[RMDB]
RNA sequence: GGGAACGACUCGAGUAGAGUCGAAAAAGCGCUAGAGAUGUACACGGGUUUGCCCCCUUAUCUGUGUACUAUCUCUUUUCAUACCUUAGGGAUAGGUUGAGUGGGGGCGGUCUGAACUUGGCGCGAAGUGUAUUUAAUAUUUCGAUAUUAAAUACACAAAAGAAACAACAACAACAAC
Reactivity to 2A3 in 0.01 (KOAc 150mM, MgCl2 10mM, bicine 150mM(pH8.5), 24C), signal-to-noise 9, nucleotides 027 to 126: a000g010c010g000c010u060a030g010a030g030a220u150g090u190a040c090a030c050g030g000g060u040u090u300g020c020c000c000c010c000u040u180a190u140c020u030g180u050g060u120a020c000u000a000u000c000u000c000u030u010u010u030c060a080u140a170c020c030u040u080a010g010g000g000a010u000a010g050g020u100u110g020a020g030u050g000g000g000g000g000c000g000g020u000c000u000g010a040a030c000u010u030g010g000c000g000c000g020a120a010
Reactivity to DMS in 0.01 (KOAc 150mM, MgCl2 10mM, bicine 150mM(pH8.5), 24C), signal-to-noise 7, nucleotides 027 to 126: a130g000c010g010c010u000a030g010a060g010a090u030g010u020a070c200a130c050g000g000g020u000u010u050g010c000c000c000c010c010u000u020a070u010c010u000g010u020g010u040a080c000u010a010u000c000u000c000u000u000u010u020c140a090u030a100c220c110u000u010a030g020g000g010a020u000a000g000g000u010u000g000a030g020u010g000g010g010g010g010c010g010g000u000c020u010g000a070a080c030u010u000g000g000c010g010c010g010a040a080